The data come from the RNA Mapping Database (RMDB), library OK2TRN. Structure probing data (DMS and 2A3) for a 177-nucleotide construct. For 2A3, 18,428 sequencing reads were counted. Reactivities are given for positions 27 through 126.

RNA sequence: GGGAACGACUCGAGUAGAGUCGAAAAGACUGUCCAUUUGCAAAACGUGCUCCAUAAGCAGCAUUAAUGGCUUUGAAAUUGAGUCCCAUAAGUGCUAUUGCAGCUUAUUCUGUUGCCCCUAUUGUAGCAUAUGAUUCUUAUUCGUAAGAAUCAUAUGAAAAGAAACAACAACAACAAC
Reactivity to DMS in 0.01 (KOAc 150mM, MgCl2 10mM, bicine 150mM(pH8.5), 24C), signal-to-noise 9, nucleotides 027 to 126: g000a070c060u000g010u010c020c020a060u000u000u000g020c090a080a060a100a110c240g010u000g010c010u000c060c120a090u010a100a090g020c110a060g010c020a040u000u010a060a050u010g000g000c030u000u000u000g010a060a060a090u000u000g010a110g000u000c040c020c020a080u010a050a060g010u000g010c030u000a090u000u010g010c040a060g010c030u000u000a050u000u010c100u010g010u000u000g010c020c010c020c060u000a090u000u000g010u000a090g010
Reactivity to 2A3 in 0.01 (KOAc 150mM, MgCl2 10mM, bicine 150mM(pH8.5), 24C), signal-to-noise 9, nucleotides 027 to 126: g030a010c030u030g060u120c020c020a030u060u030u110g050c040a030a030a090a080c080g040u040g020c010u000c070c030a100u060a240a040g040c080a010g000c000a020u010u100a060a030u050g020g000c010u050u040u080g150a100a100a040u120u130g040a040g080u030c010c000c000a010u050a050a030g040u040g020c030u090a090u200u300g020c030a040g020c020u060u050a070u190u040c100u150g160u120u110g040c000c000c000c020u060a120u090u210g080u070a020g040